Notes: An RNA of 207 nucleotides, treated with 2A3 and read out base by base. The reactions ran in a buffer of 150 mM KOAc, 10 mM MgCl2 and 150 mM bicine (pH 8.5), at 24 C. Values cover nucleotides 27 to 156. For 2A3, 620 sequencing reads were counted.
RNA sequence: GGGAACGACUCGAGUAGAGUCGAAAAAAUCCUGACACACGAUAGCUAGGACCCAAACUGGGAUUAGAUACCCCACUAUGCCUAGCCCUAAACCCAAAUAGUUACAUAACAAAACUAUUCGCCAGAGUACUACUCGCAACUGCCUAAAACUCAAAGGGCAAUACGUUCUCUUCGGAGAACGUAUUGCAAAAGAAACAACAACAACAAC
Reactivity to 2A3 in 0.01 (KOAc 150mM, MgCl2 10mM, bicine 150mM(pH8.5), 24C), signal-to-noise 2, nucleotides 027 to 156: a000a000u060c020c000u040g120a010c010a000c010a020c060g140a120u100a060g010c020u020a050g020g000a040c050c020c000a020a000a140c060u050g000g040g000a070u060u040a070g050a110u220a130c000c000c000c000a020c000u050a030u030g070c010c020u000a000g000c000c030c000u160a100a060a050c000c000c040a100a000a000u020a010g020u010u070a020c060a130u100a220a060c060a130a120a000a000c030u000a020u050u060c070g090c140c060a020g000a000g000u010a100c080u020a000c000u030c000g030c000a000a120c060u040g020c000c010u060a050a040a020a000c010u030c160a070a060a010g030g030